[RMDB]
RNA sequence: GGGAACGACUCGAGUAGAGUCGAAAAAUACCACGAAAGUUGGCUAAACGACAGCCCGAAGAGACCAGCCUUUCCGCCUCCACGUACCCCGGGGAAGAGGCGGCGAAUGACCAUCCGAGCUCUGUCUCGAGUACAGUCCGCCCUGUAUUUUUAAACACCAAAAUAAUAGUUUCGACUAUUAUUUUGGAAAAGAAACAACAACAACAAC
Reactivity to 2A3 in 0.01 (KOAc 150mM, MgCl2 10mM, bicine 150mM(pH8.5), 24C), signal-to-noise 3, nucleotides 027 to 156: a010u050a020c020c000a030c030g070a180a060a090g030u100u090g040g010c040u080a150a170a000c050g060a060c080a030g010c030c060c010g050a050a030g010a010g020a070c030c030a010g030c010c000u050u080u010c000c000g020c000c010u010c010c010a070c030g050u140a130c000c020c000c050g020g000g000g000a100a010g010a020g030g000c000g000g010c000g060a050a060u110g040a060c040c010a020u030c030c020g010a020g080c020u010c040u140g150u110c010u010c010g010a000g010u020a070c020a010g040u030c040c020g010c020c040c000u040g040u060a160u040u090u010u070u230a030a060a030c040a060
Reactivity to DMS in 0.01 (KOAc 150mM, MgCl2 10mM, bicine 150mM(pH8.5), 24C), signal-to-noise 1, nucleotides 027 to 156: a080u020a150c020c010a130c030g030a050a160a140g000u000u000g050g010c020u010a070a120a110c080g040a150c050a100g020c010c030c000g000a110a140g000a190g020a080c040c050a080g000c050c020u000u010u010c020c030g010c040c000u010c010c030a080c020g020u000a150c060c040c040c030g100g030g100g010a130a050g010a080g030g030c030g020g010c050g050a060a050u010g030a120c080c030a200u000c010c000g020a120g040c000u000c040u010g000u000c010u000c000g000a060g020u000a070c030a130g000u000c000c030g000c030c000c020u000g040u000a000u000u000u010u000u000a080a070a100c080a160